RNA sequence: GGGAACGACUCGAGUAGAGUCGAAAAGCAGUCGGCUUCGGCCGACUGCAAAUUGAUCGGGCUUCUAGAACAAAAACUAGAACAUAGAUCUAGUGUAGUUCAAAAUACGGGGGUUCGCCCCCGUAAACACAUAGUGUAGUUUCGACUACACUAUGUGAAAAGAAACAACAACAACAAC
Reactivity to DMS in 0.01 (KOAc 150mM, MgCl2 10mM, bicine 150mM(pH8.5), 24C), signal-to-noise 4, nucleotides 027 to 126: g020c000a030g020u000c010g010g020c000u000u010c230g040g020c000c010g030a010c000u000g010c000a000a020a040u010u000g010a030u000c010g020g010g020c210u000u000c010u000a040g020a080a040c060a080a100a130a120a060c000u000a000g000a010a050c040a130u010a130g000a030u000c000u000a050g030u000g010u010a180g000u010u000c040a080a070a110a170u000a000c010g000g000g000g020g000u000u010c190g010c000c000c000c000c000g000u010a010a020a120
Reactivity to 2A3 in 0.01 (KOAc 150mM, MgCl2 10mM, bicine 150mM(pH8.5), 24C), signal-to-noise 2, nucleotides 027 to 126: g010c000a000g030u020c000g020g070c070u140u190c300g080g010c040c030g000a010c010u020g010c010a000a020a010u030u090g000a010u060c020g030g060g070c150u090u010c020u070a090g020a130a060c050a040a210a040a040a030c000u010a000g000a010a010c010a060u180a040g050a040u000c020u010a040g040u040g040u070a130g010u000u100c020a120a080a000a000u060a000c000g000g000g020g010g020u000u050c070g080c010c000c070c000c000g000u000a000a010a000